[RMDB]
RNA sequence: GGGAACGACUCGAGUAGAGUCGAAAAAUGAUUCGUAGUGUAAGACGAUGGACAGUCAUCGCUUGCCAGCAGGACCACCAAAGGAAUACGCUUCGGUAACUACUCGAGAUCCCAAGCGAUAAAACAAUCACCGUGUAACCUUCGGGUUACACGGUGAAAAAGAAACAACAACAACAAC
Reactivity to 2A3 in 0.01 (KOAc 150mM, MgCl2 10mM, bicine 150mM(pH8.5), 24C), signal-to-noise 1, nucleotides 027 to 126: a020u190g010a000u010u050c010g020u040a060g010u050g040u160a040a040g080a050c020g060a050u010g000g030a170c060a020g050u210c000a000u100c050g000c060u040u100g080c040c020a000g020c030a020g030g080a000c030c000a030c030c010a050a160a000g090g020a090a020u020a080c020g000c020u000u000c000g080g000u020a160a180c040u000a010c000u000c000g010a010g000a020u000c050c010c000a000a030g180c050g150a180u090a240a180a020a030c010a020a130
The record gives the reactivity of an RNA of 177 nucleotides to 2A3. For 2A3, 608 sequencing reads were counted.